This 177-nucleotide RNA was probed chemically with DMS and 2A3. DMS adducts were read by reverse transcription with MarathonRT. Source: RMDB library OK1LIB, as collected in RNAgym. Reactivities are given for positions 27 through 126. For 2A3, 9,294 sequencing reads were counted. In probing experiments dimethyl sulfate is read out at A N1 and C N3, which are open when not base-paired. The RNA was probed in 150 mM KOAc, 10 mM MgCl2 and 150 mM bicine (pH 8.5) at 24 C.
[RMDB]
RNA sequence: GGGAACGACUCGAGUAGAGUCGAAAAGAAAGUGUGCACUUGAUACCGCGUGACUUCGGUCACGUAGUGGCAGCGCGCAGGACUUUGCUGCUACUGCUUAGUCCUGAGGUAUCUUGUGCUCACGAAAACGAUAUAGGGCAUUCGUGCCCUAUAUCGUAAAAGAAACAACAACAACAAC
Reactivity to DMS in 0.01 (KOAc 150mM, MgCl2 10mM, bicine 150mM(pH8.5), 24C), signal-to-noise 2, nucleotides 027 to 126: g020a090a110a170g010u000g000u000g000c000a000c000u000u010g000a010u010a010c000c000g000c000g010u020g000a020c020u000u060c220g020g000u010c000a010c020g000u000a030g020u010g000g000c230a180g000c040g060c010g010c010a000g020g010a010c010u010u010u000g000c010u020g010c130u020a110c130u010g010c000u000u000a040g000u000c010c020u010g010a030g030g020u000a000u000c000u000u020g000u000g000c010u000c010a010c020g010a050a040a140
Reactivity to 2A3 in 0.01 (KOAc 150mM, MgCl2 10mM, bicine 150mM(pH8.5), 24C), signal-to-noise 5, nucleotides 027 to 126: g130a010a110a010g000u000g000u000g000c000a000c000u000u010g010a000u000a000c000c000g000c000g000u000g000a000c000u030u100c280g100g000u000c010a010c010g010u000a010g000u020g140g080c190a090g110c040g000c010g000c050a010g000g010a010c010u010u010u030g000c010u020g020c030u080a130c100u120g000c000u010u020a010g000u000c000c000u010g010a020g010g010u000a000u000c000u000u010g000u000g000c000u000c010a000c010g010a040a030a000